[RMDB]
RNA sequence: GGGAACGACUCGAGUAGAGUCGAAAAGAUCAGCCUAUGUGUUCUGAUGCGGAAUUUGGGAAAUAGAAUAAAGACAGGACCCUUCCUGUCAUGCUCUUAGAAUCUCUCAGGCAAGGUACUGUGCUGCACCUUGAACAUGGUAGGCAUUGAACAAAUAGGUAAUGGGAUCAUUCGUGAUCCCAUUACCAAAAGAAACAACAACAACAAC
Reactivity to 2A3 in 0.01 (KOAc 150mM, MgCl2 10mM, bicine 150mM(pH8.5), 24C), signal-to-noise 1, nucleotides 027 to 156: g070a170u140c070a020g040c070c000u000a000u030g020u000g000u000u000c060u040g040a060u010g010c040g040g060a050a080u070u130u150g070g000g010a060a050a010u120a060g120a020a010u150a140a120a010g010a000c030a000g050g030a100c060c000c000u250u030c000c000u000g000u010c000a000u070g000c000u020c010u010u090a010g060a110a110u000c000u000c010u000c150a000g000g040c030a020a090g040g000u200a020c000u010g060u090g070c010u000g000c000a000c010c010u030u100g100a030a000c020a000u090g150g000u020a000g010g030c000a060u000u020g000a010a060c010a000a080a110u060a030
Conditions: 150 mM KOAc, 10 mM MgCl2 and 150 mM bicine (pH 8.5), 24 C. Chemical mapping of a 207-nucleotide RNA with 2A3. 2A3 adducts were read by reverse transcription with SuperScript II with manganese. It was measured as part of the RMDB library OK3TST.